Annotation
The data come from the RNA Mapping Database (RMDB), library OK3TST. Chemical mapping of a 207-nucleotide RNA with 2A3 and DMS. Reactivities are given for positions 27 through 156. DMS adducts were read by reverse transcription with MarathonRT. For 2A3, 1,929 sequencing reads were counted. Values are in units of 0.01, from 0 to 300, in steps of 10. Conditions: 150 mM KOAc, 10 mM MgCl2 and 150 mM bicine (pH 8.5), 24 C.

RNA sequence: GGGAACGACUCGAGUAGAGUCGAAAAGAAGACAUUUGGAGAAGAAGCGUUUACUGAAAGGAGAUUCCUGGGCUGGAGGAAAACCAUGAUCUACAGUUCAUGUUGACAGAUAUUGUAUUUUUGGUCCUAGAUCUGACUUUUGAAAUGACUUAUCACAACGUAUUAUGCCUUUCGAGGCAUAAUACGUAAAAGAAACAACAACAACAAC
Reactivity to 2A3 in 0.01 (KOAc 150mM, MgCl2 10mM, bicine 150mM(pH8.5), 24C), signal-to-noise 4, nucleotides 027 to 156: g060a020a010g040a000c080a110u080u100u100g020g020a070g000a060a010g030a020a010g040c030g050u030u110u100a090c070u100g070a100a050a030g060g030a040g010a050u110u150c010c000u020g030g010g020c010u010g080g010a010g010g000a000a000a020a020c010c000a010u010g030a010u030c020u080a050c020a070g010u040u060c010a020u140g000u050u030g040a030c040a050g060a060u060a050u110u110g070u060a150u010u120u000u020u060g020g000u020c020c010u040a080g000a120u070c040u060g050a060c020u100u160u100u090g060a040a080a040u110g030a060c020u070u110a020u160c050a010c020a110
Reactivity to DMS in 0.01 (KOAc 150mM, MgCl2 10mM, bicine 150mM(pH8.5), 24C), signal-to-noise 2, nucleotides 027 to 156: g020a130a110g020a050c010a100u000u000u000g020g020a120g020a090a080g050a040a090g000c050g050u010u000u000a270c080u000g000a060a090a140g020g020a110g000a120u020u000c020c020u000g020g020g010c060u000g000g000a070g000g000a060a030a070a030c040c010a040u000g010a080u000c020u000a080c040a010g000u000u010c060a150u000g040u000u010g000a080c030a080g020a110u000a100u000u020g030u000a130u000u000u000u000u010g020g000u000c000c040u000a110g050a040u000c050u010g010a060c020u000u000u000u000g010a050a040a030u030g010a070c060u010u000a060u000c040a040c030a150